The record gives the reactivity of an RNA of 177 nucleotides to 2A3 and DMS. DMS adducts were read by reverse transcription with MarathonRT. Conditions: 150 mM KOAc, 10 mM MgCl2 and 150 mM bicine (pH 8.5), 24 C. The DMS profile rests on 2,331 reads. Source: RMDB library OK1LIB, as collected in RNAgym. For 2A3 the reverse transcriptase was SuperScript II with manganese.
RNA sequence: GGGAACGACUCGAGUAGAGUCGAAAACGAGAUUUAUAAUUGGAUGCAGCCUGAAGCGCCGCUUGCUCAGGCAACUGAAGUCAGUCAACGAUUAGGCAUCCACGGUAAAGAAGCCUAAUUAAGUAAAGUUUUCAUAUCGUUUCGACGAUAUGAAAACAAAAGAAACAACAACAACAAC
Reactivity to 2A3 in 0.01 (KOAc 150mM, MgCl2 10mM, bicine 150mM(pH8.5), 24C), signal-to-noise 4, nucleotides 027 to 126: c020g010a000g080a090u050u110u070a260u150a200a130u160u110g040g000a020u020g050c030a000g000c040c000u010g070a140a040g020c060g050c050c040g100c120u150u210g010c000u000c000a000g000g000c000a000a000c010u050g070a110a030g060u110c050a000g010u040c080a070a030c070g150a110u070u080a030g000g050c010a020u000c040c010a030c030g040g070u110a080a110a010g050a020a040g030c000c020u050a110a080u160u060a080a030g120u090a050a100a050
Reactivity to DMS in 0.01 (KOAc 150mM, MgCl2 10mM, bicine 150mM(pH8.5), 24C), signal-to-noise 2, nucleotides 027 to 126: c110g020a080g000a080u000u050u040a060u020a110a120u000u010g010g020a080u020g010c090a220g010c000c020u010g000a080a100g000c000g000c140c060g020c060u000u020g000c000u000c000a000g040g030c060a050a030c110u000g000a150a060g030u020c040a030g000u000c110a120a130c220g000a040u000u000a030g010g020c000a140u000c030c030a020c090g000g000u000a050a070a090g000a080a070g000c000c000u000a010a020u000u030a070a030g000u000a050a080a100